[RMDB]
RNA sequence: GGGAACGACUCGAGUAGAGUCGAAAAAGGCCACAGCGACGGUUGCAGGAGGCGUUGCCAUCAUCAAGGUGGAGACAGCCACGGUGGUAAAGCUCACUGGAAUAGCGAUAUUGAUAAGGAGCAGUACUGGCAACUACACUUUCGAGUGUAGUUGCCAAAAAGAAACAACAACAACAAC
Reactivity to DMS in 0.01 (KOAc 150mM, MgCl2 10mM, bicine 150mM(pH8.5), 24C), signal-to-noise 1, nucleotides 027 to 126: a060g000g000c000c010a040c060a180g000c070g000a050c100g010g010u000u000g000c000a070g020g010a100g010g020c030g000u000u000g000c000c000a090u000c020a120u000c190a100a130g000g010u000g060g000a020g000a030c100a030g000c070c030a110c100g010g040u000g000g020u020a060a050a050g000c000u020c080a050c010u000g010g020a040a050u000a070g010c180g000a140u000a080u000u000g020a090u030a070a100g010g000a060g000c050a080g010u010a050c160